RNA sequence: GGGAACGACUCGAGUAGAGUCGAAAAUCCUCCCAGCCGUAGCGAAAGCGUUAAGUGUUCCGCCUGGGGAGUAUGGUCGCAAGGCUGAAACUCAAAGGAAUUGACGGGGGCUCACACAAGCGGUGGAAAAUCAGCGGCAAUUCGUUGCCGCUGAUUUAAAAGAAACAACAACAACAAC
Reactivity to 2A3 in 0.01 (KOAc 150mM, MgCl2 10mM, bicine 150mM(pH8.5), 24C), signal-to-noise 2, nucleotides 027 to 126: u070c020c030u050c000c000c020a020g000c040c000g070u150a040g000c000g140a100a090a010g000c020g010u020u080a150a050g050u040g070u100u000c000c000g080c000c020u010g000g020g020g020a000g000u010a030u300g070g010u020c040g000c070a090a010g010g000c000u000g000a000a020a020c030u030c000a040a060a000g040g010a050a100u020u100g070a090c000g000g000g000g040g080c010u020c010a070c000a000c010a070a090g000c000g000g030u030g010g010a010
Reactivity to DMS in 0.01 (KOAc 150mM, MgCl2 10mM, bicine 150mM(pH8.5), 24C), signal-to-noise 2, nucleotides 027 to 126: u000c050c020u000c040c040c020a260g070c080c020g000u020a100g000c050g030a030a090a070g040c010g060u010u010a090a050g030u040g090u000u000c040c020g020c150c070u040g000g000g010g000a070g000u050a050u080g040g030u000c000g010c290a070a110g000g030c000u000g000a090a170a120c000u000c000a060a090a130g000g040a020a040u050u000g000a120c020g000g000g000g030g000c010u000c110a050c100a100c090a090a140g020c110g000g020u020g000g000a120
Annotation
An RNA of 177 nucleotides, treated with 2A3 and DMS and read out base by base. Values cover nucleotides 27 to 126. DMS adducts were read by reverse transcription with MarathonRT. The RNA was probed in 150 mM KOAc, 10 mM MgCl2 and 150 mM bicine (pH 8.5) at 24 C. For 2A3 the reverse transcriptase was SuperScript II with manganese. 2A3 is a SHAPE reagent: it acylates the 2'-hydroxyl of flexible nucleotides of all four kinds.